[RMDB]
Structure probing data (2A3) for a 177-nucleotide construct. The reactions ran in a buffer of 150 mM KOAc, 10 mM MgCl2 and 150 mM bicine (pH 8.5), at 24 C.
RNA sequence: GGGAACGACUCGAGUAGAGUCGAAAAAGUCAUAUACGUAUGACAAUUAGUAGGCCUCAGUAAAUGUUUAUUGGAUGAAUAAAUGAAUGACUCAUCAACAAACAUUUAUUGUGUGCCUGCUAACGAAACCCCUCCCUCUGUUCGCAGAGGGAGGGGUAAAAGAAACAACAACAACAAC
Reactivity to 2A3 in 0.01 (KOAc 150mM, MgCl2 10mM, bicine 150mM(pH8.5), 24C), signal-to-noise 2, nucleotides 027 to 126: a000g000u000c000a000u010a010u040a010c230g090u040a000u000g000a000c020a030a040u000u010a010g000u000a010g000g000c030c000u000c000a030g000u000a000a000a000u000g020u000u080u000a100u090u070g300g070a000u040g020a020a000u170a290a110a120u220g210a060a110u240g130a090c010u000c000a000u000c000a040a000c010a000a000a000c000a000u000u000u010a010u000u000g030u000g040u080g000c000c000u000g000c000u000a000a000c010g020a050a000